[RMDB]
RNA sequence: GGGAACGACUCGAGUAGAGUCGAAAAUGGAAGCGCCAACGGCCGAGCGCACUCUCCAGGGGCCUCCGUGGCCGGGGCCGCGACGCUACCACCCCUCCAGACGCCGGAGGAAGGAGGAACGAGGCCACGCUGAUGAGAUCUUCGGAUCUCAUUAGUGAAAAGAAACAACAACAACAAC
Reactivity to DMS in 0.01 (KOAc 150mM, MgCl2 10mM, bicine 150mM(pH8.5), 24C), signal-to-noise 9, nucleotides 027 to 126: u020g000g010a080a070g000c030g000c020c030a090a130c060g010g010c020c020g010a130g010c040g000c040a070c090u020c080u000c020c040a090g010g000g000g010c010c000u000c030c090g020u000g000g010c020c020g000g000g000g000c010c000g010c080g010a080c080g010c040u010a100c020c020a140c050c040c000c000u000c000c010a100g000a210c110g010c080c070g000g000a040g000g010a130a080g000g000a070g000g000a130a090c110g000a140g000g000c000c020a110
Reactivity to 2A3 in 0.01 (KOAc 150mM, MgCl2 10mM, bicine 150mM(pH8.5), 24C), signal-to-noise 8, nucleotides 027 to 126: u080g020g020a050a010g010c000g000c010c010a060a050c030g030g000c010c010g010a010g000c030g000c010a040c020u070c000u010c010c020a010g040g000g010g000c000c000u010c010c060g030u040g010g000c010c010g010g000g010g000c000c000g020c020g010a020c020g000c020u030a040c000c010a020c010c010c000c000u000c000c010a040g010a060c040g050c050c030g010g000a010g010g010a010a060g020g010a020g000g010a030a020c020g030a030g010g000c000c000a000
Structure probing data (DMS and 2A3) for a 177-nucleotide construct. In probing experiments dimethyl sulfate is read out at A N1 and C N3, which are open when not base-paired. For DMS the reverse transcriptase was MarathonRT. The reactions ran in a buffer of 150 mM KOAc, 10 mM MgCl2 and 150 mM bicine (pH 8.5), at 24 C. The data come from the RNA Mapping Database (RMDB), library OK1LIB. Values cover nucleotides 27 to 126.